[RMDB]
RNA sequence: GGGAACGACUCGAGUAGAGUCGAAAAGGCGCUGCAUCCAUGUAUUGAGCACAUCGGGCGAAAGUCCCCGGGCGACGGGGCAGAGAGUGCCAGCCCGCAAGGGCAGGACCCCCGCGCGUCGUUUUUAUAAAACUCCUUUUUUCGAAAAGGAGUUUUAAAAAGAAACAACAACAACAAC
Reactivity to DMS in 0.01 (KOAc 150mM, MgCl2 10mM, bicine 150mM(pH8.5), 24C), signal-to-noise 4, nucleotides 027 to 126: g020g000c030g010c020u000g010c050a080u010c040c050a070u010g020u000a090u030u020g010a150g000c040a060c030a040u020c090g000g000g000c080g020a080a080a120g000u000c010c010c010c050g010g000g020c020g010a090c020g000g020g000g040c130a090g000a100g010a120g010u030g000c000c000a040g030c010c000c000g000c300a060a090g000g010g020c000a020g000g000a070c020c000c000c010c000g000c040g000c010g020u010c030g000u010u020u010u000u030a090
Reactivity to 2A3 in 0.01 (KOAc 150mM, MgCl2 10mM, bicine 150mM(pH8.5), 24C), signal-to-noise 2, nucleotides 027 to 126: g040g030c020g010c020u070g040c010a040u020c010c040a000u070g050u050a090u140u280g050a040g020c030a010c010a100u110c030g030g000g010c070g060a120a020a000g090u060c000c000c000c010g030g020g010c010g020a160c000g010g000g030g010c100a030g030a010g010a010g080u220g160c000c000a000g010c000c000c000g000c010a010a030g000g010g000c000a010g010g030a040c000c010c010c010c020g010c010g000c000g080u050c000g000u010u000u060u120u050a050